[RMDB]
RNA sequence: GGGAACGACUCGAGUAGAGUCGAAAAUGCCUAGGUAAUGGGAUCCUGUAAAAAUAUUGUACAAGACUAAAUGAGUCCUCAAAUGAAUCAAAUUUGUUCCAUAGUUAAAGUAUCUUAGCUGUGAAGGUGGAAUGGAUUAAUUCGUUAAUCCAUUCCAAAAAGAAACAACAACAACAAC
Reactivity to DMS in 0.01 (KOAc 150mM, MgCl2 10mM, bicine 150mM(pH8.5), 24C), signal-to-noise 6, nucleotides 027 to 126: u010g010c020c000u000a050g020g010u000a110a090u010g000g000g010a090u000c020c020u000g010u000a020a070a120a120a120u010a080u000u000g010u000a060c050a070a100g000a050c050u000a060a090a080u000g000a130g010u000c010c030u000c100a050a050a080u000g000a070a070u010c150a060a090a140u010u000u010g000u010u000c040c020a040u000a020g010u000u000a020a030a110g010u010a080u010c110u000u000a030g010c010u000g010u000g010a070a090g000g020
Reactivity to 2A3 in 0.01 (KOAc 150mM, MgCl2 10mM, bicine 150mM(pH8.5), 24C), signal-to-noise 2, nucleotides 027 to 126: u050g020c000c000u050a070g070g070u170a120a080u120g050g000g050a040u020c010c000u020g000u090a000a030a000a030a050u120a060u110u160g000u030a000c010a080a090g070a050c020u040a040a130a160u110g050a020g070u050c020c030u030c030a030a070a050u140g070a030a050u090c030a040a100a110u130u070u070g000u040u000c030c000a000u010a030g010u000u030a020a030a010g020u040a080u100c030u020u050a040g020c000u040g030u070g160a110a010g110g050